[RMDB]
This 177-nucleotide RNA was probed chemically with 2A3 and DMS.
The RNA was probed in 150 mM KOAc, 10 mM MgCl2 and 150 mM bicine (pH 8.5) at 24 C.
The 2A3 profile rests on 2,167 reads.
It was measured as part of the RMDB library OK2TRN.
RNA sequence: GGGAACGACUCGAGUAGAGUCGAAAAGGCGCCGCCGUUGGCGCUAUCGUCGCGACGGCGCUAGGGUCGAAGGCCGACCCAGCCUCGGUCGCGAGCGCUCUAGACGCGAAUCCGGAGGCUCUAGCGCGAUCUAACAGUCGUUCGCGACUGUUAGAUCAAAAGAAACAACAACAACAAC
Reactivity to 2A3 in 0.01 (KOAc 150mM, MgCl2 10mM, bicine 150mM(pH8.5), 24C), signal-to-noise 2, nucleotides 027 to 126: g000g010c020g000c030c010g020c020c030g060u110u300g030g010c020g000c040u030a150u300c020g030u020c020g000c020g010a000c000g000g000c000g000c000u010a010g000g000g000u000c000g010a160a030g170g010c030c020g000a000c010c000c000a000g000c000c000u000c020g010g030u030c000g030c030g020a150g060c080g000c040u150c070u130a070g020a060c020g000c010g050a050a120u070c050c020g100g020a010g000g020c000u020c010u050a100g000c030g000c040
Reactivity to DMS in 0.01 (KOAc 150mM, MgCl2 10mM, bicine 150mM(pH8.5), 24C), signal-to-noise 2, nucleotides 027 to 126: g000g000c040g030c000c030g030c020c050g030u000u010g060g010c000g010c300u000a010u000c020g030u000c020g000c020g000a020c000g000g010c030g030c010u000a010g000g020g030u010c000g010a120a120g010g000c120c020g010a020c000c000c010a080g000c020c020u000c050g000g010u000c000g030c010g010a050g010c050g000c120u000c110u000a080g000a120c030g000c030g000a060a150u010c010c000g040g020a090g010g000c010u000c070u000a050g000c100g010c090